[RMDB]
RNA sequence: GGGAACGACUCGAGUAGAGUCGAAAAGAUAUGGAACGAUGAGGACAUGUCGUGUCGGAAACGACCGACAACAGCCUCCUCGUUCCUAAGUCAAACGGAGGCUCUUUGUUCGCAAAGAGCCUCCGAAGAUCACUUAUUGGUUCGCCAAUAAGUGAUCAAAAGAAACAACAACAACAAC
Reactivity to DMS in 0.01 (KOAc 150mM, MgCl2 10mM, bicine 150mM(pH8.5), 24C), signal-to-noise 4, nucleotides 027 to 126: g000a020u000a170u010g000g010a010a000c010g010a010u010g010a010g010g020a220c110a130u000g010u010c000g010u020g020u000c010g000g010a020a050a100c010g020a010c010c010g010a020c000a010a080c280a130g000c000c000u000c000c070u000c010g010u000u000c010c000u000a000a060g000u000c010a100a150a260c030g000g000a020g010g010c000u000c000u000u000u000g000u010u020c180g000c010a010a010a000g000a010g010c010c000u000c000c000g000a010a030
Reactivity to 2A3 in 0.01 (KOAc 150mM, MgCl2 10mM, bicine 150mM(pH8.5), 24C), signal-to-noise 4, nucleotides 027 to 126: g010a000u040a010u070g010g000a010a000c010g010a010u020g000a010g040g060a120c080a170u040g010u010c080g070u200g000u190c000g010g000a020a020a020c010g000a000c020c010g030a000c010a000a040c070a040g150c010c000u000c000c010u000c010g000u000u010c000c000u000a000a000g010u000c010a030a040a080c020g000g000a000g000g000c000u000c010u030u050u000g090u120u220c300g000c190a000a000a000g000a000g010c010c010u010c000c000g010a000a000
The record gives the reactivity of an RNA of 177 nucleotides to DMS and 2A3. For 2A3 the reverse transcriptase was SuperScript II with manganese. In probing experiments dimethyl sulfate is read out at A N1 and C N3, which are open when not base-paired. Values cover nucleotides 27 to 126. The reactions ran in a buffer of 150 mM KOAc, 10 mM MgCl2 and 150 mM bicine (pH 8.5), at 24 C.